The record gives the reactivity of an RNA of 177 nucleotides to 2A3 and DMS.
RNA sequence: GGGAACGACUCGAGUAGAGUCGAAAAGAACCAGGCUUCGGCCUGGUUCAUAAUUACGCGGGCGUGGGACACAGCCGGAGCUGGCCUCGGAUAGUCUCAGUAUAAUCUUAGCCUUCGGGCUAAGAAACGCCUUAUAAUGUUUCGACAUUAUAAGGCGAAAAGAAACAACAACAACAAC
Reactivity to 2A3 in 0.01 (KOAc 150mM, MgCl2 10mM, bicine 150mM(pH8.5), 24C), signal-to-noise 1, nucleotides 027 to 126: g010a020a020c020c000a000g060g010c010u050u130c260g010g000c010c000u010g040g000u010u000c010a000u010a000a010u030u050a010c070g000c170g080g020g020c040g010u040g000g000g060a030c030a010c020a120g040c050c040g030g010a050g000c040u060g050g000c030c010u070c010g000g010a020u040a080g020u000c000u000c030a010g010u070a100u060a180a070u030c000u000u010a000g000c000c000u030u040c180g080g010g000c000u000a000a000g000a010a000a000
Reactivity to DMS in 0.01 (KOAc 150mM, MgCl2 10mM, bicine 150mM(pH8.5), 24C), signal-to-noise 3, nucleotides 027 to 126: g000a030a020c010c000a000g010g050c000u000u010c240g040g000c000c000u010g020g000u000u000c000a000u000a060a110u000u010a080c090g000c130g000g000g010c030g040u000g000g000g000a070c080a150c110a100g010c030c020g000g000a080g020c050u000g000g000c060c020u010c030g010g010a080u010a090g010u000c010u010c010a100g000u010a090u010a100a150u000c000u000u000a000g000c000c000u010u010c180g010g000g000c000u000a000a000g010a010a060a090
For 2A3, 1,487 sequencing reads were counted. For 2A3 the reverse transcriptase was SuperScript II with manganese. The DMS profile rests on 2,525 reads. DMS adducts were read by reverse transcription with MarathonRT.